Record summary
This 177-nucleotide RNA was probed chemically with DMS. Values cover nucleotides 27 to 126. For DMS, 896 sequencing reads were counted. DMS (dimethyl sulfate) methylates the pairing face of unpaired adenines and cytosines.

RNA sequence: GGGAACGACUCGAGUAGAGUCGAAAAUUGAGGCUAUGAAGGCGGAUAUCCAAGACCGCUCAUGGGGGAGCGUGCAAUUGCCAGGACAAAACGAGGCUGAGUCUGAGGUUGUGAGCGCAUCGGACGACACGUCUCCUCAGUUCGCUGAGGAGACGUGAAAAGAAACAACAACAACAAC
Reactivity to DMS in 0.01 (KOAc 150mM, MgCl2 10mM, bicine 150mM(pH8.5), 24C), signal-to-noise 1, nucleotides 027 to 126: u000u000g010a060g030g000c050u010a060u020g010a110a140g040g000c010g010g020a130u010a100u000c060c100a050a110g030a120c100c030g030c020u000c030a080u000g000g000g000g000g000a020g010c060g030u000g020c120a050a090u000u010g000c000c060a130g000g000a090c130a040a030a060a090c140g000a040g000g010c040u000g000a140g010u010c030u030g000a060g010g030u000u000g010u000g000a050g000c040g020c040a130u000c000g000g000a060c060g000a180